The data come from the RNA Mapping Database (RMDB), library M2RFPK. This 207-nucleotide RNA was probed chemically with DMS and 2A3. The RNA was probed in 150 mM KOAc, 10 mM MgCl2 and 150 mM bicine (pH 8.5) at 24 C.

RNA sequence: GGGAACGACUCGAGUAGAGUCGAAAAGGACUGCGCAGUCCGGCAACAUCAGCGGAGAGCCCGCUAUACGUGACGGAUUGGCUGAAGCGUACAGAAAUAUUGAGCCUCCUGCAAGAGGCAGCCAAGCAAAACGUACGUGAGUUCGCUCACGUACGAAGACUGUACGAAACUUCGGUUUCGUACAGUCAAAAGAAACAACAACAACAAC
Reactivity to DMS in 0.01 (KOAc 150mM, MgCl2 10mM, bicine 150mM(pH8.5), 24C), signal-to-noise 1, nucleotides 027 to 156: g010g000a000c000u000g010c040g000c050a060g010u000c030c010g050g020c070a040a070c200a060u010c140a070g040c000g040g000a290g020a280g000c070c010c010g010c020u010a030u020a040c060g030u000g040a070c040g040g020a050u000u000g010g080c050u020g020a000a090g060c100g000u000a070c000a030g000a100a050a110u000a160u000u000g000a210g060c020c020u000c020c030u010g030c130a090a100g000a080g030g000c000a030g000c060c010a070a110g080c050a000a050a180a220c000g030u000a030c020g060u030g020a010g000u020u020c300g040c060u000c000a000c010g020u020a010c000g000a050a030
Reactivity to 2A3 in 0.01 (KOAc 150mM, MgCl2 10mM, bicine 150mM(pH8.5), 24C), signal-to-noise 4, nucleotides 027 to 156: g020g020a040c040u080g000c150g020c090a010g000u010c010c000g000g050c010a050a040c010a070u160c050a030g020c020g020g010a110g000a060g290c010c020c000g000c010u020a020u040a020c130g010u010g050a010c020g010g000a020u020u020g050g040c030u040g040a090a040g030c020g050u080a030c070a060g140a100a130a020u240a100u170u160g020a030g010c010c000u020c010c020u120g080c070a110a010g000a000g010g000c010a010g020c020c020a040a010g030c050a030a050a020a040c010g000u000a000c000g000u000g000a000g000u060u130c170g010c070u000c000a000c000g000u000a000c000g000a000a000
High DMS reactivity at an A or C suggests that its Watson-Crick edge is free. For 2A3 the reverse transcriptase was SuperScript II with manganese. The DMS profile rests on 1,475 reads.